[RMDB]
RNA sequence: GGGAACGACUCGAGUAGAGUCGAAAACAGUCAAUAACCCACGAUGUCAAAGAACAAAAGUGUUGGAUCCACUUUUGACAGGUUACCAUGUACCACAUUGACCCGUGACACUCUGUUCAUCAGAGACCCAGUUCGGAGUGUUCGCACUCCGAACUGGAAAAGAAACAACAACAACAAC
Reactivity to 2A3 in 0.01 (KOAc 150mM, MgCl2 10mM, bicine 150mM(pH8.5), 24C), signal-to-noise 2, nucleotides 027 to 126: c060a010g080u040c070a050a030u090a210a160c030c020c000a000c060g070a040u110g050u080c040a050a050a070g090a120a090c000a010a010a000a050g020u010g010u080u130g110g040a040u020c010c000a050c000u020u040u070u060g020a040c150a110g000g040u000u040a040c030c050a060u140g030u080a010c010c000a100c110a060u090u040g020a020c000c000c000g020u030g030a000c000a010c030u000c000u000g060u120u140c010a260u080c000a020g000a000g080a060c030